[RMDB]
RNA sequence: GGGAACGACUCGAGUAGAGUCGAAAAGACCCCCUCUUCGGAGGGGGUCAAACAUUCCCAAAUUCCACCUUGGUGAUGGCACCCGGAGAGGAGCCAUCUUAAAAACCGAGGCGUUCGCGCCUCGGAAUCUAAUCACGUAGUUCGCUACGUGAUUAGAAAAAGAAACAACAACAACAAC
Reactivity to DMS in 0.01 (KOAc 150mM, MgCl2 10mM, bicine 150mM(pH8.5), 24C), signal-to-noise 2, nucleotides 027 to 126: g000a010c000c000c000c000c000u000c000u010u010c200g030g010a020g020g030g010g000g000u000c010a000a010a080c160a300u000u000c000c000c000a110a080a080u010u010c090c050a120c120c090u010u010g000g000u000g010a010u000g000g010c000a100c030c020c010g050g020a230g000a120g020g010a110g040c010c030a010u010c010u020u010a050a050a070a130a110c000c000g030a010g000g020c000g070u000u000c150g050c000g010c000c010u000c000g010g000a000a020

Structure probing data (DMS) for a 177-nucleotide construct. Source: RMDB library M2PK50, as collected in RNAgym. Reactivities are given for positions 27 through 126.